This 177-nucleotide RNA was probed chemically with 2A3 and DMS. Conditions: 150 mM KOAc, 10 mM MgCl2 and 150 mM bicine (pH 8.5), 24 C. DMS adducts were read by reverse transcription with MarathonRT. The data come from the RNA Mapping Database (RMDB), library OK2TRN.

RNA sequence: GGGAACGACUCGAGUAGAGUCGAAAAUGGUUACGUCGGUUAAGGCACGCUGCCUUUCCUGCGACAGACGCGCCGUCCUGGACGAACGAAAACUGAAGUCGAAGCGCCCGCCAAUUUGCAGAUGGUGCACAGUGCGUUAAUUCGUUAACGCACUGUGAAAAGAAACAACAACAACAAC
Reactivity to 2A3 in 0.01 (KOAc 150mM, MgCl2 10mM, bicine 150mM(pH8.5), 24C), signal-to-noise 2, nucleotides 027 to 126: u130g020g000u100u050a050c040g000u010c000g000g080u100u130a070a050g020g000c040a030c150g190c170u140g000c000c000u030u020u020c020c010u010g050c000g020a030c040a040g050a030c020g000c000g020c040c000g020u060c010c000u030g030g000a010c010g030a130a000c000g050a050a050a020a040c070u080g040a080a040g030u010c020g010a090a010g060c020g050c030c020c020g000c000c010a110a130u040u070u200g030c040a020g070a200u040g040g080u080g000
Reactivity to DMS in 0.01 (KOAc 150mM, MgCl2 10mM, bicine 150mM(pH8.5), 24C), signal-to-noise 3, nucleotides 027 to 126: u010g020g010u010u000a060c070g010u020c050g020g020u010u010a080a070g000g020c030a110c130g000c150u010g020c020c010u010u020u000c040c070u000g000c070g000a090c050a060g000a100c050g020c180g020c000c010g020u000c040c010u010g020g000a060c060g020a050a090c050g000a070a050a110a090c100u000g000a100a110g000u000c040g010a130a110g010c120g000c050c030c030g040c030c060a060a090u000u000u000g020c080a090g000a090u010g020g000u020g010